[RMDB]
RNA sequence: GGGAACGACUCGAGUAGAGUCGAAAAUCUAGGGUUCCGCAUGUCAAUUGACAUGGACUGGUCCGAGAGAAAACACAUACGCGUAAAUAGAAGCGCGUAUGCACACGGAGGGAAAAAAGACCGGGAGAAUGGGAUUAUUAGUUCGCUAAUAAUCCAAGUACUAAACGUUGUUCGCAACGUUUAGUACAAAAGAAACAACAACAACAAC
Reactivity to 2A3 in 0.01 (KOAc 150mM, MgCl2 10mM, bicine 150mM(pH8.5), 24C), signal-to-noise 4, nucleotides 027 to 156: u010c030u050a080g000g000g040u020u020c000c000g000c000a000u000g010u000c030a170a300u220u300g000a000c000a010u020g000g040a090c030u090g010g000u000c010c020g000a000g000a000g000a000a090a010a010c090a010c000a010u000a000c000g020c000g030u080a030a220a170u200a290g180a300a060g000c000g000c000g000u000a000u000g020c030a020c010a000c050g000g020a060g030g000g000a020a120a050a000a060a000g040a040c070c060g020g050g010a070g040a070a100u160g100g000g000a000u000u000a000u000u000a000g020u010u040c220g000c090u000a000a000u000a000a000u000c000c000a000a020
Reactivity to DMS in 0.01 (KOAc 150mM, MgCl2 10mM, bicine 150mM(pH8.5), 24C), signal-to-noise 1, nucleotides 027 to 156: u000c000u000a070g030g010g000u010u020c030c010g020c000a050u000g030u000c000a300a140u010u010g020a030c000a000u010g010g030a070c070u000g000g010u000c040c000g000a100g010a060g020a120a040a120a080c110a060c000a000u000a000c000g050c030g030u000a000a110a100u000a250g000a280a300g000c000g060c000g030u000a000u000g000c060a100c090a110c050g000g000a190g030g010g020a020a090a050a070a060a090g030a060c020c020g000g010g010a080g000a160a010u000g040g000g010a030u000u000a000u000u000a030g020u000u000c300g030c010u000a010a020u000a020a000u000c000c010a000a160